Source: RMDB library OK1LIB, as collected in RNAgym. Chemical mapping of a 177-nucleotide RNA with DMS and 2A3. For 2A3, 12,350 sequencing reads were counted. For DMS, 17,275 sequencing reads were counted. Conditions: 150 mM KOAc, 10 mM MgCl2 and 150 mM bicine (pH 8.5), 24 C.
[RMDB]
RNA sequence: GGGAACGACUCGAGUAGAGUCGAAAAGUUCUGACGCUGUAUGGAAUCCCCCAUCGCGACUGCGGUAGCUACGCAUCCGGUGGGUUCGCGACGGGCACUGAUUACCGCGGGUGGAUCGACGCUGUCGAGCUUUUCAACAAUUCGUUGUUGAAAAGCUAAAAGAAACAACAACAACAAC
Reactivity to DMS in 0.01 (KOAc 150mM, MgCl2 10mM, bicine 150mM(pH8.5), 24C), signal-to-noise 6, nucleotides 027 to 126: g020u010u010c020u000g010a090c030g000c040u010g010u020a050u030g000g000a100a090u020c050c070c000c000c000a030u000c010g020c180g020a040c170u000g010c010g000g010u020a140g010c150u040a120c040g000c010a100u000c010c010g020g010u000g000g000g010u000u020c040g020c040g000a100c070g000g000g000c060a090c080u040g010a070u010u030a050c030c010g030c090g010g000g000u020g000g000a070u000c020g010a080c060g000c040u020g010u000c030g000
Reactivity to 2A3 in 0.01 (KOAc 150mM, MgCl2 10mM, bicine 150mM(pH8.5), 24C), signal-to-noise 9, nucleotides 027 to 126: g030u030u020c020u030g020a020c030g000c070u060g040u150a070u130g070g040a060a090u050c000c000c000c000c010a020u020c000g030c130g050a040c120u040g000c000g020g040u060a070g070c060u080a050c030g010c010a040u030c010c010g010g030u040g030g040g020u040u060c030g000c010g030a060c020g030g010g000c050a050c110u100g020a110u050u120a080c010c020g010c030g040g010g030u070g020g000a040u060c020g030a020c040g010c160u090g030u080c020g010